This 177-nucleotide RNA was probed chemically with DMS. The RNA was probed in 150 mM KOAc, 10 mM MgCl2 and 150 mM bicine (pH 8.5) at 24 C. Reactivities are given for positions 27 through 126. For DMS the reverse transcriptase was MarathonRT.

[RMDB]
RNA sequence: GGGAACGACUCGAGUAGAGUCGAAAAGAUAUGGAUACACCGGAAGACGCAGAUACCAACCGAGUCCAACAUCGGAAACGAUGUAGGACGUUUGACGUUGGAGUAGUCUUCCGGUGUAUCCUAAGUCCCUAAGACUUUCGUUCGCGAAAGUCUUAGGAAAAGAAACAACAACAACAAC
Reactivity to DMS in 0.01 (KOAc 150mM, MgCl2 10mM, bicine 150mM(pH8.5), 24C), signal-to-noise 1, nucleotides 027 to 126: g000a140u010a300u020g000g010a030u000a010c010a000c000c020g030g010a000a000g030a010c010g000c250a170g010a090u010a010c010c010a000a010c000c010g000a150g050u000c000c010a140a010c010a010u000c020g020g010a130a090a230c010g070a020u000g010u010a050g030g020a050c000g000u000u000u020g020a150c300g010u000u020g000g000a060g010u000a020g030u000c020u020u010c000c000g010g000u030g000u020a000u000c010c000u000a020a050g010u000c000